The record gives the reactivity of an RNA of 207 nucleotides to 2A3.
RNA sequence: GGGAACGACUCGAGUAGAGUCGAAAAUUACGUAUAUCUAAUAUUACUUGCCCCGAUUCAACCAUCGAUUGCAUAAAUGUAAUAGCAUAUUGAUGUCGAGAUUUACGUAUACUAUAAUGUGCGUCAAGUAUGCGUGAUUCGGCCACGAAUCGAUUGCGCUAAAGAGGGCGUUCGCGCCCUCUUUAGCAAAAGAAACAACAACAACAAC
Reactivity to 2A3 in 0.01 (KOAc 150mM, MgCl2 10mM, bicine 150mM(pH8.5), 24C), signal-to-noise 2, nucleotides 027 to 156: u100u030a000c020g000u060a060u040a140u160c120u090a080a160u140a220u240u080a090c070u040u100g010c000c010c000c000g040a060u050u090c010a020a010c040c040a020u010c040g020a050u070u020g000c050a040u050a200a150a060u140g160u300a180a110u050a160g030c010a040u080a000u150u100g060a080u060g000u040c010g020a010g030a180u000u000u000a000c000g000u000a000u000a000c010u020a020u100a230a030u160g110u060g130c030g090u000c040a000a000g010u000a030u000g000c000g000u000g000a000u000u000c000g020g020c000c020a070c120g000a000a000u010c000g110a080u040u160g020c010

Conditions: 150 mM KOAc, 10 mM MgCl2 and 150 mM bicine (pH 8.5), 24 C.